[RMDB]
RNA sequence: GGGAACGACUCGAGUAGAGUCGAAAACCUCGAUACGCCUUCGAGGGGGUUCACACCUCCAGUCGGCGGGCCGGCUACUCUUCUUUCCCUUCUCUCGUCUUCCUCGGUCAACCUCUUAAGUUCCUCUACAUCUCUGGCUUCGGCCAGAGAAAAAGAAACAACAACAACAAC
Reactivity to DMS in 0.01 (KOAc 150mM, MgCl2 10mM, bicine 150mM(pH8.5), 24C), signal-to-noise 5, nucleotides 027 to 129: c070c030u020c090g030a130u060a090c000g030c000c000u000u000c040g050a100g010g010g030g010g010u000u000c300a150c190a230c070c010u030c010c010a120g010u000c160g010g020c000g020g040g040c110c060g030g050c080u040a000c030u000c030u000u000c060u000u000u000c000c030c010u000u000c000u000c020u000c020g040u000c070u030u020c050c010u040c050g010g010u020c060a110a090c000c000u040c060u000u000a040a060g000u000u040c010c030u050c100u000a090c180a080
Reactivity to 2A3 in 0.01 (KOAc 150mM, MgCl2 10mM, bicine 150mM(pH8.5), 24C), signal-to-noise 4, nucleotides 027 to 129: c020c000u010c000g020a040u070a170c060g040c020c020u020u030c020g010a290g010g000g000g000g000u130u140c070a030c010a010c040c000u030c000c000a060g060u030c010g020g020c000g010g000g000c010c000g000g000c000u070a050c020u030c000u040u010c000u040u010u040c010c000c000u060u020c040u010c000u000c010g030u000c030u080u030c020c010u020c000g030g000u020c000a040a060c040c000u000c000u040u050a060a000g020u010u010c000c020u030c010u010a030c030a110